An RNA of 177 nucleotides, treated with 2A3 and read out base by base. Reactivities are given for positions 27 through 126. For 2A3 the reverse transcriptase was SuperScript II with manganese.
RNA sequence: GGGAACGACUCGAGUAGAGUCGAAAAUUCGACUGCUGACCGUAAAUUUUCCGGUCAGAGGUCGUUAGAGAACUGCUAUAUAAGCCUAGCUCGAGAUGCGUGUGCUGGUUUGCUUCCAAUGCGAACUCCCGCCUACAGAGUUCGCUCUGUAGGCGGGAAAAGAAACAACAACAACAAC
Reactivity to 2A3 in 0.01 (KOAc 150mM, MgCl2 10mM, bicine 150mM(pH8.5), 24C), signal-to-noise 2, nucleotides 027 to 126: u040u040c030g000a010c000u010g000c020u000g020a000c000c000g070u120a020a090a300u210u230u090u210c140c000g010g010u010c000a000g000a000g000g000u000c000g000u000u030a030g020a010g010a130a040c010u120g010c040u020a000u030a030u080a240a020g020c000c000u020a040g020c000u010c090g020a030g060a170u250g020c010g000u170g120u090g050c010u050g010g000u000u070u060g000c000u070u060c000c050a080a070u090g050c040g000a040a040c030u020